Source: RMDB library OK1LIB, as collected in RNAgym. Chemical mapping of a 177-nucleotide RNA with 2A3.
RNA sequence: GGGAACGACUCGAGUAGAGUCGAAAAUAGCUGCCACUUCAUCGUCACCAUUAGCAGCACCAUGAUCAGGACCAUCGUCAUCUGGGAACUGACAGUGACAUUGUAAACAUUUGCAUUGCUUAAAAAGCACCUCCAGGUCGUUCGCGACCUGGAGGUGAAAAGAAACAACAACAACAAC
Reactivity to 2A3 in 0.01 (KOAc 150mM, MgCl2 10mM, bicine 150mM(pH8.5), 24C), signal-to-noise 1, nucleotides 027 to 126: u080a000g020c000u020g080c000c020a130c000u160u190c120a030u000c040g090u020c000a000c020c000a060u060u230a000g000c030a000g000c000a070c000c000a000u040g000a130u030c040a010g090g000a110c030c000a050u090c020g060u110c010a080u000c020u000g000g000g030a000a080c000u080g000a000c000a050g060u080g000a000c000a040u020u000g140u140a000a090a000c020a110u030u130u060g000c090a050u080u110g000c000u110u290a000a060a000a000a240g130

Record summary:
Reactivities are given for positions 27 through 126.